The record gives the reactivity of an RNA of 177 nucleotides to DMS and 2A3. For DMS the reverse transcriptase was MarathonRT. It was measured as part of the RMDB library TTRDEL. The reactions ran in a buffer of 150 mM KOAc, 10 mM MgCl2 and 150 mM bicine (pH 8.5), at 24 C.

RNA sequence: GGGAACGACUCGAGUAGAGUCGAAAAGAUAUGGACGAUUCAUCUUGGACCUUACGUAACAUCCAGUCGGAAACGACUGGUGGUAAGCUAGAUGGGUCCUAAGUCAAAACACCCGUUCGCGGGUGAACAUCGUGUUUACCUUCGGGUAAACACGAUGAAAAGAAACAACAACAACAAC
Reactivity to DMS in 0.01 (KOAc 150mM, MgCl2 10mM, bicine 150mM(pH8.5), 24C), signal-to-noise 3, nucleotides 027 to 126: g010a050u000a280u000g020g000a090c090g000a080u010u020c010a000u000c010u030u010g030g000a110c280c020u000u010a010c000g010u000a000a050c200a030u010c000c000a010g000u000c010g010g000a090a110a160c010g000a010c000u000g000g010u010g010g010u000a000a010g010c010u000a020g010a010u010g000g020g000u000c000c050u000a090a140g010u010c040a070a050a130a280c010a010c000c000c000g030u010u010c190g010c050g000g010g020u010g010a050a150
Reactivity to 2A3 in 0.01 (KOAc 150mM, MgCl2 10mM, bicine 150mM(pH8.5), 24C), signal-to-noise 2, nucleotides 027 to 126: g060a020u140a040u210g080g010a040c100g140a180u250u000c010a000u020c020u040u110g100g010a150c070c000u010u000a010c050g030u090a030a020c020a190u180c020c000a000g000u010c010g030g030a090a050a070c010g000a010c000u010g000g000u010g000g000u030a010a020g010c020u030a020g010a020u010g040g000g050u000c000c000u010a120a030g040u030c000a020a030a110a100c020a020c000c050c010g030u050u030c290g000c000g020g000g030u030g020a010a040